[RMDB]
RNA sequence: GGGAACGACUCGAGUAGAGUCGAAAACGCCCGAUGAGAUUAGCGGUGCGGAUGACGAUGUGCGCUUCAACAAGCGGCUUUGGUCGAUUUUCUUCAGCCAUCUCGAACAAAUUAGGGAAUAUUACAAAUCCGAUUAUUUAUUCGUAAAUAAUCGGAUAAAAGAAACAACAACAACAAC
Reactivity to 2A3 in 0.01 (KOAc 150mM, MgCl2 10mM, bicine 150mM(pH8.5), 24C), signal-to-noise 4, nucleotides 027 to 126: c060g040c000c000c010g030a160u160g040a020g040a060u100u160a080g070c040g070g030u070g010c010g060g010a050u050g010a010c020g020a030u040g040u100g110c000g000c000u040u030c040a110a100c030a050a070g020c010g050g020c010u100u050u070g140g000u020c010g060a050u060u030u030u050c000u140u070c040a020g020c020c010a040u010c000u010c020g050a070a030c060a100a100a060u180u130a050g050g000g050a090a060u120a100u150u170a080c070a050a210
Reactivity to DMS in 0.01 (KOAc 150mM, MgCl2 10mM, bicine 150mM(pH8.5), 24C), signal-to-noise 6, nucleotides 027 to 126: c260g000c010c000c000g010a130u010g010a080g020a070u010u010a060g030c050g000g010u010g010c140g020g000a050u010g000a080c020g010a030u000g010u000g010c020g020c010u010u000c130a110a140c240a070a080g010c010g010g000c040u010u010u010g020g020u000c020g010a110u010u000u000u010c020u000u000c070a110g010c030c110a040u000c020u000c020g010a080a190c160a050a070a080u010u010a080g000g010g010a120a070u010a060u010u010a110c140a080a100

Conditions: 150 mM KOAc, 10 mM MgCl2 and 150 mM bicine (pH 8.5), 24 C.
An RNA of 177 nucleotides, treated with 2A3 and DMS and read out base by base.
The DMS profile rests on 6,371 reads.
For 2A3 the reverse transcriptase was SuperScript II with manganese.
Source: RMDB library OK2TST, as collected in RNAgym.